RNA sequence: GGGAACGACUCGAGUAGAGUCGAAAAGGGGCCCCUCGCUCGUAUCUCCGAGAGGAGACGAGAAAGAGGAGGAUCUCCCUUUGCCAUCCGAGGGAACUACGUUCUCCUUCGGAUGCCCAGGUCGGACGAGGCAGGCCCUUCGGGGCCUGCAAAAGAAACAACAACAACAAC
Reactivity to DMS in 0.01 (KOAc 150mM, MgCl2 10mM, bicine 150mM(pH8.5), 24C), signal-to-noise 2, nucleotides 027 to 129: g000g000g000g000c060c000c000c000u020c010g000c040u000c020g030u050a120u000c010u100c040c030g020a300g000a300g050g080a030g030a030c060g000a000g050a030a020a050g000a030g060g020a240g090g020a180u000c040u020c050c000c000u000u000u000g000c160c030a080u010c020c000g000a030g020g040g030a000a110c070u040a120c230g020u130u000c100u020c000c000u050u000c010g040g000a030u000g000c100c000c020a060g010g000u010c010g010g000a020c140g030a170g000
Reactivity to 2A3 in 0.01 (KOAc 150mM, MgCl2 10mM, bicine 150mM(pH8.5), 24C), signal-to-noise 1, nucleotides 027 to 129: g040g000g010g010c030c000c000c000u000c000g060c000u000c000g030u030a120u030c000u000c000c000g040a050g000a030g060g000a000g000a000c000g010a040g000a070a130a010g000a000g020g030a100g020g040a020u030c040u070c020c010c020u010u000u040g040c000c000a000u000c010c000g000a000g000g000g000a020a030c000u150a130c200g130u110u000c070u040c030c030u010u020c000g010g010a000u010g000c000c000c000a010g010g020u060c050g000g050a100c000g000a010g000